Source information:
This 177-nucleotide RNA was probed chemically with DMS and 2A3. The data come from the RNA Mapping Database (RMDB), library OK2TST. The reactions ran in a buffer of 150 mM KOAc, 10 mM MgCl2 and 150 mM bicine (pH 8.5), at 24 C.
[RMDB]
RNA sequence: GGGAACGACUCGAGUAGAGUCGAAAAGGGUAAGUGCUUACAAACGAGACGCAUUUGCUGUGACCGGAGCCGAAUGUUUGAUUCCCGGCCAGCUACCGUUCACCUGAAGGAAGUCGGCGCGUUACCCACGCCUAUGAGUGUUCGCACUCAUAGGCGUAAAAGAAACAACAACAACAAC
Reactivity to DMS in 0.01 (KOAc 150mM, MgCl2 10mM, bicine 150mM(pH8.5), 24C), signal-to-noise 2, nucleotides 027 to 126: g000g050g000u000a010a040g020u000g020c000u020u000a030c020a040a090a150c090g010a170g020a060c080g020c120a110u000u000u000g020c000u000g010u000g010a140c020c030g000g000a120g030c140c130g000a040a100u000g000u030u020u000g000a070u000u000c100c010c000g000g010c020c010a010g020c000u010a020c300c000g030u000u000c100a150c070c080u000g020a060a170g010g000a090a050g000u000c040g000g020c000g000c020g020u000u000a040c000c000c010
Reactivity to 2A3 in 0.01 (KOAc 150mM, MgCl2 10mM, bicine 150mM(pH8.5), 24C), signal-to-noise 2, nucleotides 027 to 126: g010g000g010u010a030a030g020u010g010c020u020u030a030c000a060a170a040c120g010a110g030a080c030g020c060a090u050u060u140g000c000u010g110u140g030a300c000c000g000g010a010g160c150c060g070a140a060u230g210u300u230u200g120a080u040u000c020c000c000g000g020c000c000a000g030c020u020a050c000c030g020u010u050c030a060c060c010u090g140a160a030g110g020a030a100g060u020c060g020g000c000g010c000g030u040u020a010c010c010c000